[RMDB]
RNA sequence: GGGAACGACUCGAGUAGAGUCGAAAACUGGGGCUGCCGGCGCUGGAGACGCGCAUGCUGGUGCUGUUUUCCGCCCUGCCCACCGCCUCGGCGGCGUAUGUGCUGGCCAUGCGCAUGGGCGGCGACAAGCUCAUGCCCAUUUCGAUGGGCAUGAGCUAAAAGAAACAACAACAACAAC
Reactivity to DMS in 0.01 (KOAc 150mM, MgCl2 10mM, bicine 150mM(pH8.5), 24C), signal-to-noise 1, nucleotides 027 to 126: c040u010g010g010g000g000c100u000g010c040c060g020g000c050g000c060u010g000g010a090g010a110c180g020c050g030c020a000u000g010c050u000g020g000u010g000c010u060g010u010u000u000u010c040c030g030c020c060c100u000g020c030c060c040a180c090c030g010c060c020u010c240g020g020c090g000g000c160g000u020a070u020g010u010g020c020u000g000g000c050c080a030u000g020c060g010c040a080u010g000g000g000c000g010g020c100g050a090c130a130
The record gives the reactivity of an RNA of 177 nucleotides to DMS. It was measured as part of the RMDB library OK2TST. For DMS, 1,164 sequencing reads were counted. Values cover nucleotides 27 to 126.